[RMDB]
RNA sequence: GGGAACGACUCGAGUAGAGUCGAAAAGAACUUUUAUGUCUUAGACACUACAACACUAUAUUGGCAGUAGUUGACUGCGGGGCCCCAACAUAGAGAAAUUGGAUUCCCAAUUUCUACAGACAAUGCAAUUGCAAAGCUUUUUCGAAAGCUUUGCAAUAAAAGAAACAACAACAACAAC
Reactivity to 2A3 in 0.01 (KOAc 150mM, MgCl2 10mM, bicine 150mM(pH8.5), 24C), signal-to-noise 3, nucleotides 027 to 126: g010a030a030c030u060u120u120u110a130u210g010u010c040u050u120a100g050a080c050a000c040u120a040c040a180a010c020a040c120u110a080u070a080u300u090g060g000c030a010g020u080a000g020u050u060g020a040c010u010g000c010g020g020g040g000c000c020c020c020a000a070c010a060u140a040g080a000g010a030a010a040u060u040g000g110a210u280u220c040c010c000a000a000u010u000u000c010u070a030c020a020g110a010c050a050a100u140g030c040a050
Reactivity to DMS in 0.01 (KOAc 150mM, MgCl2 10mM, bicine 150mM(pH8.5), 24C), signal-to-noise 2, nucleotides 027 to 126: g010a090a090c070u000u030u020u000a050u030g020u040c020u010u000a040g010a140c040a080c080u000a040c040a040a110c070a050c110u000a100u020a100u030u030g010g050c040a090g020u000a070g000u030u000g020a140c030u000g050c050g040g000g000g040c010c000c000c040a070a060c170a120u020a080g010a030g010a000a030a000u010u000g010g030a230u090u050c120c010c000a010a020u000u000u000c000u000a060c130a120g000a070c120a050a090u010g000c070a090